Structure probing data (2A3 and DMS) for a 177-nucleotide construct.
Values cover nucleotides 27 to 126.
It was measured as part of the RMDB library 15KREP.
The 2A3 profile rests on 1,022 reads.

[RMDB]
RNA sequence: GGGAACGACUCGAGUAGAGUCGAAAAUGGUGCUCCAGAUGAUGCCUCUCGGUUACUUCAUACCGUGCUUGCAAAGGCUGAGUUAUGCUGUUCUGCACGCAUGGUUUGGAGAGAGUGGUGCAAUGUCCGACUACAAUCUCUUCGGAGAUUGUAGUCGAAAAGAAACAACAACAACAAC
Reactivity to 2A3 in 0.01 (KOAc 150mM, MgCl2 10mM, bicine 150mM(pH8.5), 24C), signal-to-noise 1, nucleotides 027 to 126: u150g030g000u070g040c040u020c000c010a000g030a120u140g010a060u050g010c000c000u070c000u000c020g040g040u150u220a060c000u000u010c000a010u000a000c000c000g010u010g010c000u000u020g000c010a010a040a010g000g000c000u060g060a060g190u140u120a090u190g010c000u000g180u190u040c030u020g000c010a020c020g020c000a010u010g090g000u000u000u000g000g000a010g000a000g000a010g020u060g030g010u020g000c040a090a000u120g040u170c030
Reactivity to DMS in 0.01 (KOAc 150mM, MgCl2 10mM, bicine 150mM(pH8.5), 24C), signal-to-noise 1, nucleotides 027 to 126: u000g000g030u010g000c110u000c020c040a080g020a110u000g010a070u020g020c040c000u010c020u010c020g000g000u010u020a140c020u010u000c030a010u000a010c000c010g030u000g010c010u010u010g010c020a020a070a300g000g000c000u000g000a170g060u010u000a050u000g000c050u000g030u000u000c220u020g030c010a010c070g020c010a000u000g010g020u000u020u000g010g000a030g020a040g000a050g000u000g020g000u000g020c090a080a070u000g020u000c050